[RMDB]
RNA sequence: GGGAACGACUCGAGUAGAGUCGAAAAGGACUUCUACAACCUCUUCAGCGACGCCAUGGGAAAGAUGUCAGUGCAUUUUUACUACUCCUAUGAAGCAGCCAAGUUGGCCAAGUUCGGAGGGGAGGAACAGGGAACUCUAGAUAAACUAGCGGAUAUCCCAAUACUUGGCGUUCGCGCCAAGUAUUGGAAAAGAAACAACAACAACAAC
Reactivity to 2A3 in 0.01 (KOAc 150mM, MgCl2 10mM, bicine 150mM(pH8.5), 24C), signal-to-noise 2, nucleotides 027 to 156: g010g030a090c000u090u010c010u140a140c050a050a120c010c020u050c000u070u050c050a040g000c000g010a020c030g000c050c000a050u000g000g050g010a000a240a150g010a060u040g060u120c080a050g040u110g260c060a090u030u020u010u100u120a020c000u020a060c000u050c000c000u060a070u170g040a190a000g070c050a010g000c010c000a080a100g100u120u140g070g000c000c000a080a050g000u060u100c050g010g050a010g030g000g000g030a030g020g010a060a020c020a040g000g000g010a020a000c000u030c010u000a010g000a100u050a130a250a090c070u020a030g010c020g050g020a010u040a040u110c000

The record gives the reactivity of an RNA of 207 nucleotides to 2A3. The RNA was probed in 150 mM KOAc, 10 mM MgCl2 and 150 mM bicine (pH 8.5) at 24 C. The data come from the RNA Mapping Database (RMDB), library OK3TST.